This 177-nucleotide RNA was probed chemically with 2A3 and DMS. The 2A3 profile rests on 1,745 reads. It was measured as part of the RMDB library TTRDEL. 2A3 adducts were read by reverse transcription with SuperScript II with manganese.
RNA sequence: GGGAACGACUCGAGUAGAGUCGAAAAGAUAUGGAUGCUCUCGAUAAGGCUCCAUCGGAAACGAUGGUAGCCUUUUGACGAGAGGUCCUAAGUCACAAAGUCUCUAUUGCUUCGGCAAUAGAGACAAGUCUAAACGACUGUUCGCAGUCGUUUAGACAAAAGAAACAACAACAACAAC
Reactivity to 2A3 in 0.01 (KOAc 150mM, MgCl2 10mM, bicine 150mM(pH8.5), 24C), signal-to-noise 1, nucleotides 027 to 126: g000a000u020a040u090g000g010a000u090g300c000u030c000u000c000g070a080u070a300a080g010g000c000u110c000c000a020u000c000g000g000a070a000a000c000g000a010u010g020g000u120a030g020c000c000u000u000u000u000g020a020c010g010a000g000a000g040g000u000c000c000u020a030a020g000u010c040a030c060a240a250a050g010u000c000u050c000u000a020u000u020g040c040u030u060c250g130g000c020a000a020u020a000g020a000g000a020c000a000a000
Reactivity to DMS in 0.01 (KOAc 150mM, MgCl2 10mM, bicine 150mM(pH8.5), 24C), signal-to-noise 2, nucleotides 027 to 126: g020a010u000a060u010g000g000a020u000g000c000u000c000u000c000g010a070u020a020a030g020g040c000u000c000c000a010u000c000g010g040a020a010a070c000g000a010u000g000g010u000a020g020c000c000u000u000u000u010g000a270c010g000a010g000a020g000g000u000c000c010u000a000a120g000u000c010a140c170a090a120a180g000u000c000u000c010u000a000u000u000g000c000u000u010c290g020g020c000a010a010u000a010g010a000g000a000c030a020a040